RNA sequence: GGGAACGACUCGAGUAGAGUCGAAAAGUGUAGCGUCACUUUGAUGGCGGUACUAUGAAUUGAUGCAAGGUGUGGAGCGACCUUAAACAGUUCUGGUGGCGCUCUGAAUGGAGUGCUCUACUGAGAUUUAACUUAUGCACGUUCGCGUGCAUAAGAAGUCUGUAAUAGGGUUCGCCCUAUUACAGACAAAAGAAACAACAACAACAAC
Reactivity to DMS in 0.01 (KOAc 150mM, MgCl2 10mM, bicine 150mM(pH8.5), 24C), signal-to-noise 1, nucleotides 027 to 156: g000u000g000u000a040g020c040g030u000c000a000c040u000u010u040g000a120u000g030g000c020g000g010u000a060c010u000a050u010g010a080a120u000u000g010a080u000g030c110a100a060g000g030u000g060u030g010g000a080g030c030g010a100c030c020u000u000a060a090a140c030a100g000u000u000c040u010g000g000u010g010g020c000g000c010u000c010u000g000a140a140u000g020g010a050g000u000g020c020u000c010u000a070c030u000g010a110g010a150u000u000u000a140a200c020u010u000a010u010g010c000a000c000g040u000u000c300g060c010g030u000g010c000a000u000a000a010g010a090a110
Reactivity to 2A3 in 0.01 (KOAc 150mM, MgCl2 10mM, bicine 150mM(pH8.5), 24C), signal-to-noise 9, nucleotides 027 to 156: g070u050g010u020a040g080c010g040u050c010a020c050u160u140u210g190a240u070g030g000c020g030g090u010a020c020u040a060u150g040a050a050u070u060g060a070u090g080c060a040a010g010g000u030g020u090g030g020a010g010c010g020a010c000c000u040u070a090a060a010c010a030g000u010u000c010u030g040g020u030g010g020c000g010c000u010c020u060g110a090a080u240g020g000a010g000u020g010c000u000c020u040a060c030u080g070a050g040a210u060u150u180a070a010c000u000u000a000u000g000c000a000c010g010u030u030c110g010c010g090u000g000c000a000u000a000a000g000a010a010

An RNA of 207 nucleotides, treated with DMS and 2A3 and read out base by base.